[RMDB]
RNA sequence: GGGAACGACUCGAGUAGAGUCGAAAACAUCAGGAGGACCUUCCGCGCACUUCCAAGCAGGAGCUUUCCUUCCAAGGGCACUUCCAAUCUACUCGAGAGGAGGAGGAGGAGGAGGAUUCCCACAAAACAGAUAGUGAUAAUUCGUUAUCACUAUCUGAAAAGAAACAACAACAACAAC
Reactivity to DMS in 0.01 (KOAc 150mM, MgCl2 10mM, bicine 150mM(pH8.5), 24C), signal-to-noise 9, nucleotides 027 to 126: c090a080u010c110a150g000g000a060g020g000a090c300c040u000u000c030c040g020c070g020c070a100c070u000u010c090c110a070a110g020c050a090g000g010a040g000c100u000u000u000c010c010u000u000c030c060a100a100g010g000g000c110a060c070u000u000c020c040a140a140u010c010u000a020c020u000c010g000a040g010a190g000g010a080g010g010a060g000g010a070g000g000a080g000g000a070g000g000a190u000u000c000c000c000a090c210a050a060a080a140
Reactivity to 2A3 in 0.01 (KOAc 150mM, MgCl2 10mM, bicine 150mM(pH8.5), 24C), signal-to-noise 9, nucleotides 027 to 126: c020a060u150c050a030g020g020a010g010g020a040c000c000u090u010c030c030g020c020g010c060a070c080u220u050c080c020a060a040g010c020a030g010g040a020g010c040u110u130u070c010c000u090u030c020c020a070a070g040g010g000c090a020c050u040u000c010c000a030a070u010c000u030a030c010u020c020g040a030g010a030g060g040a040g000g030a050g010g040a040g000g000a030g010g020a020g010g010a040u020u020c010c000c000a040c030a010a080a020a010
This 177-nucleotide RNA was probed chemically with DMS and 2A3. Values are in units of 0.01, from 0 to 300, in steps of 10. DMS adducts were read by reverse transcription with MarathonRT. For 2A3 the reverse transcriptase was SuperScript II with manganese.